[RMDB]
RNA sequence: GGGAACGACUCGAGUAGAGUCGAAAAUGGUAGAGCUUGCCGGAAAAGUUGAUCCGCAUCCCGUGGGUCAGGUGACCGCCAUGAGCCAGCGACAACCCCAGGAUGGUGUCGCCGGGGUUUAGCAGCGGGGAGGAUGAAGUUUCGACUUCAUCCUCCCAAAAGAAACAACAACAACAAC
Reactivity to 2A3 in 0.01 (KOAc 150mM, MgCl2 10mM, bicine 150mM(pH8.5), 24C), signal-to-noise 2, nucleotides 027 to 126: u150g020g000u100a070g000a030g060c060u060u060g010c080c000g030g120a090a200a100a210g200u080u020g030a040u000c000c000g050c020a100u100c070c020c030g060u000g000g070g010u010c010a020g050g120u020g080a050c000c020g000c010c010a030u090g060a030g050c040c010a030g010c010g010a000c040a100a130c000c020c000c030a060g050g020a160u170g020g110u070g030u040c070g010c000c000g010g000g000g000u010u030u000a040g000c010a010g020c000g070
Reactivity to DMS in 0.01 (KOAc 150mM, MgCl2 10mM, bicine 150mM(pH8.5), 24C), signal-to-noise 2, nucleotides 027 to 126: u010g030g010u000a110g000a050g090c050u000u000g020c190c020g000g050a080a080a140a030g040u040u000g020a010u000c000c000g020c060a080u000c030c070c020g020u000g000g000g030u020c010a060g000g110u010g010a260c060c040g000c080c050a040u000g000a140g010c000c020a110g000c060g060a060c240a050a060c010c000c020c040a140g050g000a180u000g030g030u040g000u000c000g000c000c010g000g000g000g000u000u040u020a190g000c000a210g020c080g020
This 177-nucleotide RNA was probed chemically with 2A3 and DMS. The 2A3 profile rests on 1,256 reads. The data come from the RNA Mapping Database (RMDB), library OK1LIB. The DMS profile rests on 1,785 reads.